An RNA of 177 nucleotides, treated with DMS and 2A3 and read out base by base. The RNA was probed in 150 mM KOAc, 10 mM MgCl2 and 150 mM bicine (pH 8.5) at 24 C.

RNA sequence: GGGAACGACUCGAGUAGAGUCGAAAAACCCCGCGUACCGGGGAUGGUGCGGCUCCGUUGGUUCGGGUCUGUCGCGGUUUGUGUAGUCUGUCGCGUCAGGGGGUGCACAGGCAGGGGGAAGACGUAAGGAGCAUCAAGGGUUCGCCUUUGAUGCUCCAAAAGAAACAACAACAACAAC
Reactivity to DMS in 0.01 (KOAc 150mM, MgCl2 10mM, bicine 150mM(pH8.5), 24C), signal-to-noise 4, nucleotides 027 to 126: a070c020c000c010c040g000c120g010u020a110c100c020g000g000g010g000a060u030g000g000u010g020c040g000g020c030u020c010c040g020u000u010g020g000u010u000c040g010g020g000u020c040u020g010u010c030g020c050g010g000u000u030u000g010u000g030u020a080g010u020c020u010g020u010c040g010c040g020u000c060a100g020g000g000g000g010u000g000c070a070c090a100g000g010c080a070g000g010g000g010g010a080a050g000a080c130g010u010a090a190
Reactivity to 2A3 in 0.01 (KOAc 150mM, MgCl2 10mM, bicine 150mM(pH8.5), 24C), signal-to-noise 3, nucleotides 027 to 126: a000c000c010c010c000g000c030g030u030a050c030c010g000g010g010g030a010u040g030g040u090g010c000g010g000c020u010c010c020g010u000u100g020g020u040u040c000g010g020g030u020c010u070g020u020c020g000c020g040g000u050u110u060g030u000g040u020a050g060u030c030u020g070u040c020g000c020g080u010c040a070g000g000g030g000g000u060g020c050a050c030a080g030g050c010a030g050g000g000g000g010a040a000g030a020c020g010u030a070a120

The 2A3 profile rests on 4,162 reads.